[RMDB]
RNA sequence: GGGAACGACUCGAGUAGAGUCGAAAAAUUUAAUUGCCAGGACGGUCACCUUUGGGGUGGUGACAAGUGUGAUCACUUGGGUGGUGGCUGUGUUUGCGCGUCUCCCAGGAAUCUCGUUUACCAGAUCCAUAUGACUCCGAUUCGUCGGAGUCAUAUGAAAAGAAACAACAACAACAAC
Reactivity to DMS in 0.01 (KOAc 150mM, MgCl2 10mM, bicine 150mM(pH8.5), 24C), signal-to-noise 3, nucleotides 027 to 126: a050u040u050u030a050a040u040u030g020c020c000a050g000g010a040c030g020g000u010c000a030c010c010u000u010u000g030g000g010g030u000g000g000u010g000a070c020a180a090g020u040g010u000g000a050u020c020a030c010u000u020g000g000g000u000g010g000u010g000g000c010u010g000u000g010u020u010u000g000c060g000c000g000u020c070u010c000c000c020a190g000g000a060a080u010c100u000c040g020u010u000u020a090c070c030a100g000a110u030c100
Reactivity to 2A3 in 0.01 (KOAc 150mM, MgCl2 10mM, bicine 150mM(pH8.5), 24C), signal-to-noise 7, nucleotides 027 to 126: a000u220u260u210a110a140u120u130g020c010c010a010g000g040a010c020g010g000u020c000a010c010c010u090u190u200g110g000g000g000u040g010g030u040g020a020c030a050a110g190u200g030u040g150a050u080c000a000c000u020u030g140g000g030u070g000g030u020g010g000c000u000g020u010g040u040u050u050g050c060g000c000g040u000c010u000c040c000c000a000g040g040a030a060u020c030u020c080g070u060u040u050a180c040c010a020g010a080u020c020